[RMDB]
RNA sequence: GGGAACGACUCGAGUAGAGUCGAAAACUUUCGUUUCAAUUCUUUGCACUAUUAGAGUUAUUUUUGCAUUUGCUGUUCAGCAAAUACUCUAAUGCGCAUCACUGGUAACUUUGCUGAACUAUGGGUAGAUCCGGGCAUCAUUCGUGAUGCCCGGAUCAAAAGAAACAACAACAACAAC
Reactivity to 2A3 in 0.01 (KOAc 150mM, MgCl2 10mM, bicine 150mM(pH8.5), 24C), signal-to-noise 1, nucleotides 027 to 126: c000u180u180u230c110g000u000u000u160c080a120a050u090u090c060u060u110u000g000c000a000c000u200a000u030u000a000g000a000g170u040u040a300u000u140u030u050u020g000c000a200u000u000u300g090c120u060g000u090u000c000a000g110c000a010a010a010u000a000c000u160c000u000a040a040u020g000c030g000c000a000u000c000a000c020u000g150g000u260a300a100c160u080u060u060g000c000u030g030a030a030c000u000a020u000g110g000g000u000a020